[RMDB]
RNA sequence: GGGAACGACUCGAGUAGAGUCGAAAACAACUUCUAUAACGAUGCGGUCAUUGACCCGUAUAUGCUGGAACGCGCUGAAAUUAUGCGUGGCCCGGUUUCCGUGCUUUACGGUAAAAGCAGUCCUGGCGUCUCUGAAUCGUUUCGACGAUUCAGAGACAAAAGAAACAACAACAACAAC
Reactivity to 2A3 in 0.01 (KOAc 150mM, MgCl2 10mM, bicine 150mM(pH8.5), 24C), signal-to-noise 2, nucleotides 027 to 126: c020a030a040c040u130u000c020u160a210u080a280a040c050g030a030u050g050c010g010g060u040c050a260u110u240g010a110c030c040c000g060u050a110u020a020u110g020c000u040g000g000a070a020c010g010c000g000c000u010g030a040a110a070u220u090a040u300g000c000g060u020g000g000c000c020c000g020g000u020u050u030c000c000g030u080g050c080u210u160u160a050c030g090g070u090a060a060a020a000g000c030a000g060u030c010c050u000g020g000c000
Reactivity to DMS in 0.01 (KOAc 150mM, MgCl2 10mM, bicine 150mM(pH8.5), 24C), signal-to-noise 1, nucleotides 027 to 126: c040a170a070c060u000u030c050u000a120u000a110a120c020g000a070u000g020c140g010g010u000c020a170u000u000g010a070c130c010c010g000u000a010u010a070u000g000c030u000g000g000a070a100c040g010c010g000c020u010g000a110a200a150u010u030a150u020g000c000g020u000g000g050c130c030c010g010g000u000u000u000c020c020g040u000g020c160u000u010u000a070c020g030g030u000a030a040a070a020g010c070a030g000u010c040c020u000g010g000c160

This 177-nucleotide RNA was probed chemically with 2A3 and DMS. The 2A3 profile rests on 1,006 reads. The RNA was probed in 150 mM KOAc, 10 mM MgCl2 and 150 mM bicine (pH 8.5) at 24 C. High 2A3 reactivity points to a flexible backbone, as in loops and unpaired stretches. For DMS the reverse transcriptase was MarathonRT. The data come from the RNA Mapping Database (RMDB), library OK2TRN.